[RMDB]
RNA sequence: GGGAACGACUCGAGUAGAGUCGAAAAACACCAAAACUGAAAACGGAAGGCAAUCCUUCAACGACGAUACUUACUUUCCUUUGAUCGUCGUUACUACUGGCAUAGCCACAAAGGAGAACAAACAUGAGCGCGGACACUGACUUCGGUCAGUGUCCAAGAGCGCAGAUAUCUUCGGAUAUCUGCGCUCAAAAGAAACAACAACAACAAC
Reactivity to 2A3 in 0.01 (KOAc 150mM, MgCl2 10mM, bicine 150mM(pH8.5), 24C), signal-to-noise 2, nucleotides 027 to 156: a000c090a070c010c050a100a110a040a090c170u190g140a120a040a040a060c070g120g000a000a020g080g010c100a020a100u200c020c000u030u040c000a000a020c000g030a000c000g000a000u030a120c030u110u060a090c030u080u190u080c000c030u050u010u020g020a030u010c020g000u000c000g000u000u020a020c010u040a030c010u020g010g000c090a230u100a100g030c090c020a040c110a020a000a020g030g030a040g020a020a040c030a140a100a040c080a170u160g100a100g080c090g020c080g020g000a010c000a000c000u010g010a000c000u000u080c150g000g000u000c000a000g000u000g000u000c000c000a020a000

Conditions: 150 mM KOAc, 10 mM MgCl2 and 150 mM bicine (pH 8.5), 24 C.
This 207-nucleotide RNA was probed chemically with 2A3.
For 2A3, 766 sequencing reads were counted.
2A3 adducts were read by reverse transcription with SuperScript II with manganese.
The data come from the RNA Mapping Database (RMDB), library M2RFPK.
Reactivities are rounded to 0.1 and cut off at 0 and 3.